[RMDB]
RNA sequence: GGGAACGACUCGAGUAGAGUCGAAAAGACGCCUCUAGAAGAAGAGGCUAGGGGGUAUUCCGGUGUGGGAUACUUAGUAAUAUGCAACGCUAAUUGCAUAAGAUUGUAGGACGGAAUUUACAGUCUUUAGAGAUAAGCACGUUCGCGUGCUUAUCAAACAACCUACAAGCUUCGGCUUGUAGGUUGUAAAAGAAACAACAACAACAAC
Reactivity to 2A3 in 0.01 (KOAc 150mM, MgCl2 10mM, bicine 150mM(pH8.5), 24C), signal-to-noise 1, nucleotides 027 to 156: g080a000c110g000c090c000u000c000u050a150g040a300a030g040a010a010g000a010g000g020c000u040a070g000g000g000g000g010u030a030u000u000c000c040g160g060u280g070u290g080g000g010a000u020a010c000u030u080a010g030u060a010a120u070a060u150g030c020a030a060c010g010c220u130a060a110u070u020g020c000a000u000a050a020g010a000u020u020g010u040a010g040g110a030c050g070g080a030a050u070u030u040a090c010a030g000u000c000u060u010u130a080g020a000g000a070u000a000a000g010c000a010c000g000u100u120c160g010c000g090u010g000c000u000u000a000u000c000a000a000